An RNA of 177 nucleotides, treated with DMS and 2A3 and read out base by base. Conditions: 150 mM KOAc, 10 mM MgCl2 and 150 mM bicine (pH 8.5), 24 C. Source: RMDB library OK2TST, as collected in RNAgym. For DMS the reverse transcriptase was MarathonRT.
RNA sequence: GGGAACGACUCGAGUAGAGUCGAAAAUGAAUACUAUUAGGGAAGUUCGAGCGUCCAAGUAUGGGUCAAUAAUACGGUAUAGUGGCCAUGACUAUGGUGGCCAGGGGCCCCACACCCAUUUCCUCGGCCUAUCGCUCUAUUUCGAUGGAGCGAUAGGAAAAGAAACAACAACAACAAC
Reactivity to DMS in 0.01 (KOAc 150mM, MgCl2 10mM, bicine 150mM(pH8.5), 24C), signal-to-noise 8, nucleotides 027 to 126: u020g010a110a080u000a070c060u000a080u000u000a130g010g000g010a080a140g000u000u000c050g010a090g020c080g010u000c030c040a070a090g010u000a050u000g000g000g000u010c090a060a060u010a070a080u010a080c140g010g010u000a080u000a090g020u000g010g010c010c010a020u000g000a130c190u010a090u000g010g020u000g000g000c010c010a050g000g000g000g020c030c010c020c040a070c150a060c020c010c010a090u000u000u000c030c010u000c160g020g000
Reactivity to 2A3 in 0.01 (KOAc 150mM, MgCl2 10mM, bicine 150mM(pH8.5), 24C), signal-to-noise 6, nucleotides 027 to 126: u070g010a030a030u080a150c050u070a070u270u130a100g020g010g050a050a040g040u060u070c030g010a020g030c040g040u010c030c020a060a000g030u050a060u100g020g030g000u030c040a010a050u120a170a050u090a120c080g070g040u100a070u040a180g120u060g020g000c010c010a010u040g010a040c070u100a070u250g130g000u020g020g000c000c000a010g020g020g000g000c020c000c020c000a010c000a010c000c010c010a010u040u050u030c010c010u020c030g060g000